[RMDB]
RNA sequence: GGGAACGACUCGAGUAGAGUCGAAAAGAUAUGGAUACCAACAGCUUUUGACGACGAUCGGAAACGAUCGAAUCGAUAAGCUGGGUAUCCUAAGUCAAAGACGGUUAUUCUUCGGAAUAACCGUCAACGAUAUUAGAACGUUCGCGUUCUAAUAUCGAAAAGAAACAACAACAACAAC
Reactivity to 2A3 in 0.01 (KOAc 150mM, MgCl2 10mM, bicine 150mM(pH8.5), 24C), signal-to-noise 7, nucleotides 027 to 126: g010a000u040a020u080g010g000a000u010a010c030c040a120a300c070a110g030c010u080u170u300u250g080a040c030g010a010c010g000a000u000c010g010g010a040a020a010c010g000a000u000c000g020a060a050u040c010g070a100u050a300a010g000c000u020g010g000g000u000a000u000c000c000u000a060a010g010u000c030a120a040a140g000a000c000g000g010u010u010a000u010u000c020u040u100c300g070g000a010a000u000a010a000c000c000g000u000c000a000a000
Reactivity to DMS in 0.01 (KOAc 150mM, MgCl2 10mM, bicine 150mM(pH8.5), 24C), signal-to-noise 7, nucleotides 027 to 126: g000a020u010a230u010g000g010a020u000a010c000c000a100a210c040a010g010c010u010u010u010u010g010a260c050g010a130c230g000a020u010c000g010g000a060a050a110c010g000a000u000c000g000a200a060u000c000g010a070u000a000a000g010c000u000g000g000g000u000a000u000c000c000u000a010a060g000u000c020a090a110a120g000a010c000g000g000u000u000a000u000u000c000u000u010c190g010g010a020a000u000a010a000c000c010g010u000c000a000a040
Overview: The record gives the reactivity of an RNA of 177 nucleotides to 2A3 and DMS. DMS (dimethyl sulfate) methylates the pairing face of unpaired adenines and cytosines. It was measured as part of the RMDB library TTRDEL. For 2A3 the reverse transcriptase was SuperScript II with manganese. Conditions: 150 mM KOAc, 10 mM MgCl2 and 150 mM bicine (pH 8.5), 24 C. Values cover nucleotides 27 to 126.